[RMDB]
RNA sequence: GGGAACGACUCGAGUAGAGUCGAAAAUGUGUCUGUGAACCUUGAUGUUCUCCAGCUUACUCCAAGUCAGUGGGAGUUGACCUUGUGAACUGUGUGCUUGGUAAACAAUAAAGUAUAUAAACUAACAACAGAAAGAAAGGUUCGCCUUUCUUUCUGUAAAAGAAACAACAACAACAAC
Reactivity to 2A3 in 0.01 (KOAc 150mM, MgCl2 10mM, bicine 150mM(pH8.5), 24C), signal-to-noise 3, nucleotides 027 to 126: u110g060u020g030u020c010u040g080u010g050a040a050c020c000u040u040g070a080u100g070u030u010c020u000c040c030a000g010c000u040u030a010c020u000c030c030a060a100g080u060c050a060g070u090g060g050g000a020g000u000u060g020a050c020c000u030u050g020u010g090a060a050c040u010g010u020g040u060g150c020u030u030g030g020u080a140a030a040c030a040a040u180a210a110a030g020u010a070u000a000u030a280a120a040c000u050a030a010c040a010
Reactivity to DMS in 0.01 (KOAc 150mM, MgCl2 10mM, bicine 150mM(pH8.5), 24C), signal-to-noise 5, nucleotides 027 to 126: u010g020u000g010u000c040u000g010u000g020a140a090c070c050u000u000g020a090u000g010u000u000c030u010c050c040a060g020c090u010u000a080c020u000c030c030a080a140g000u010c080a040g020u000g020g000g000a080g010u000u000g020a050c070c070u000u000g030u000g020a050a110c070u000g020u000g020u000g000c020u000u000g000g010u010a060a080a050c090a040a070u000a090a050a100g000u000a060u010a100u010a080a070a110c070u010a080a090c120a080
Conditions: 150 mM KOAc, 10 mM MgCl2 and 150 mM bicine (pH 8.5), 24 C. The record gives the reactivity of an RNA of 177 nucleotides to 2A3 and DMS. The 2A3 profile rests on 2,503 reads. 2A3 is a SHAPE reagent: it acylates the 2'-hydroxyl of flexible nucleotides of all four kinds. For 2A3 the reverse transcriptase was SuperScript II with manganese. DMS adducts were read by reverse transcription with MarathonRT.